[RMDB]
RNA sequence: GGGAACGACUCGAGUAGAGUCGAAAAGAUAUGGACGCGAUUGGGAGUGGUUCGGAAACGAAUACCACGAAGAACAAUUGCGUCCUAAGUCAAAAGAAACCCGCUAUCUUCGGAUAGCGGGUUUCAAGAUAAAGUAGAGCUUCGGCUCUACUUUAUCAAAAGAAACAACAACAACAAC
Reactivity to DMS in 0.01 (KOAc 150mM, MgCl2 10mM, bicine 150mM(pH8.5), 24C), signal-to-noise 1, nucleotides 027 to 126: g000a040u000a300u000g010g000a000c000g020c000g000a010u000u000g000g010g000a070g030u000g000g010u000u000c010g000g000a090a080a200c000g010a010a090u000a050c000c000a000c000g000a060a160g010a040a190c000a000a000u000u010g000c000g000u000c000c000u000a000a080g000u000c040a080a100a140a200g010a000a000a020c000c000c030g000c000u000a000u000c010u000u020c230g000g000a010u000a010g010c010g000g020g000u000u000u000c000a050a060